[RMDB]
RNA sequence: GGGAACGACUCGAGUAGAGUCGAAAAAGCACACCUUCGACUUUUGGGUGCAGUGGACGGCCCCGAACGGCAAGAUCAAGGCCGUGCGCCCGAAGCUGGUUGCGUGGCUGGAUAUGCGCUCCCGCGCUAUCAUCGGCGAUGUAGCGUGCGUCAACGCUACCGCAGUGUACUUCGGUACACUGCGGUAAAAAGAAACAACAACAACAAC
Reactivity to 2A3 in 0.01 (KOAc 150mM, MgCl2 10mM, bicine 150mM(pH8.5), 24C), signal-to-noise 1, nucleotides 027 to 156: a040g210c210a190c020a000c010c000u000u090c050g160a180c040u060u080u020u230g000g020g010u000g000c000a000g000u210g130g070a080c030g080g000c000c000c000c030g120a100a100c110g000g030c080a120a130g000a160u080c070a000a150g020g000c000c000g040u020g000c010g000c000c000c010g040a090a050g020c110u180g090g010u020u090g010c050g060u020g000g000c040u030g000g000a050u030a080u160g010c020g000c090u110c000c030c010g000c010g000c030u070a060u200c040a010u040c030g090g000c100g020a090u090g030u060a020g000c010g000u050g010c000g100u070c100a040a100c010g020c040

An RNA of 207 nucleotides, treated with 2A3 and read out base by base.
Conditions: 150 mM KOAc, 10 mM MgCl2 and 150 mM bicine (pH 8.5), 24 C.
For 2A3, 570 sequencing reads were counted.